[RMDB]
The data come from the RNA Mapping Database (RMDB), library OK3TST. The record gives the reactivity of an RNA of 207 nucleotides to 2A3 and DMS. The reactions ran in a buffer of 150 mM KOAc, 10 mM MgCl2 and 150 mM bicine (pH 8.5), at 24 C. Values cover nucleotides 27 to 156. The DMS profile rests on 4,194 reads. For 2A3 the reverse transcriptase was SuperScript II with manganese.
RNA sequence: GGGAACGACUCGAGUAGAGUCGAAAACGGCCAUGCGGUCUAAUCGACAUAUAGACCGAUACACCGAUAUUCGGCGUCAGACUCAGGCUGACGUAGAGCGCGCAGAGAUGUGGCAGCGAGUGCUUGACCGUAAGGCGCGCAGCCAGCAGAUCAAGGAUAGAGUCGAAAUAUUCGUAUUUCGACUCUAAAAAGAAACAACAACAACAAC
Reactivity to 2A3 in 0.01 (KOAc 150mM, MgCl2 10mM, bicine 150mM(pH8.5), 24C), signal-to-noise 2, nucleotides 027 to 156: c010g020g020c020c030a160u240g010c000g000g030u000c010u020a100a080u140c140g140a050c110a030u300a000u010a090g000a020c000c000g000a000u030a030c070a010c010c000g100a080u060a130u190u110c030g030g010c000g010u020c000a020g040a110c020u010c150a090g120g000c000u000g010a000c000g010u040a030g040a000g030c050g000c020g000c040a020g020a020g010a150u060g030u050g100g000c030a000g000c040g060a130g090u160g040c030u070u080g060a170c020c000g040u050a030a030g050g000c020g010c010g000c000a000g020c000c020a000g000c030a010g020a090u160c060a110a050g070g010a040
Reactivity to DMS in 0.01 (KOAc 150mM, MgCl2 10mM, bicine 150mM(pH8.5), 24C), signal-to-noise 2, nucleotides 027 to 156: c040g030g000c000c060a180u010g000c000g020g020u000c000u000a040a130u000c080g020a210c180a130u000a180u010a020g000a020c010c000g020a120u000a130c110a100c010c020g030a100u010a100u000u010c030g000g020c000g000u000c030a030g000a080c020u010c140a060g000g000c000u000g000a050c000g030u000a110g000a100g010c040g040c050g040c020a100g000a180g000a130u010g030u010g010g020c070a040g000c100g040a150g020u000g020c040u000u000g010a070c000c030g000u020a100a120g000g010c000g030c090g060c020a050g020c010c020a120g030c070a090g000a120u000c040a060a080g030g000a260